[RMDB]
RNA sequence: GGGAACGACUCGAGUAGAGUCGAAAAUGAGGAAUCGAAGGACAAAGCUGUAGAUGCUGAUCAACGGAAGGAUACAGCGGACUCUAUCGCAGACCAAUUUUCAGCAUUUAAUAUUGGUCCCACGAGAGACAUACCUGGCAUUCGUGCCAGGUAUGUCAAAAGAAACAACAACAACAAC
Reactivity to DMS in 0.01 (KOAc 150mM, MgCl2 10mM, bicine 150mM(pH8.5), 24C), signal-to-noise 3, nucleotides 027 to 126: u020g000a130g020g020a170a090u000c000g030a170a300g010g020a040c090a120a080a070g030c010u000g000u000a020g020a090u000g000c000u000g010a060u030c260a040a050c300g000g000a110a090g000g000a210u000a040c170a060g080c050g000g000a290c160u000c120u020a130u010c020g000c080a100g000a260c000c070a020a060u000u000u000u000c060a020g010c060a040u000u000u020a040a050u020a050u020u040g010g000u000c000c000c050a080c050g000a070g010a230
Reactivity to 2A3 in 0.01 (KOAc 150mM, MgCl2 10mM, bicine 150mM(pH8.5), 24C), signal-to-noise 4, nucleotides 027 to 126: u210g030a070g050g080a030a040u080c030g040a090a110g000g010a050c010a030a100a030g000c020u020g040u040a020g010a100u100g020c010u020g030a060u070c040a040a100c090g090g030a050a060g050g000a030u080a110c020a010g010c010g020g030a060c020u060c010u080a070u090c010g000c040a000g020a050c000c000a030a050u000u030u010u070c040a020g020c010a070u020u040u150a100a090u070a060u060u090g080g000u010c000c000c000a030c020g050a070g000a010
An RNA of 177 nucleotides, treated with DMS and 2A3 and read out base by base. For 2A3, 4,192 sequencing reads were counted. Values cover nucleotides 27 to 126.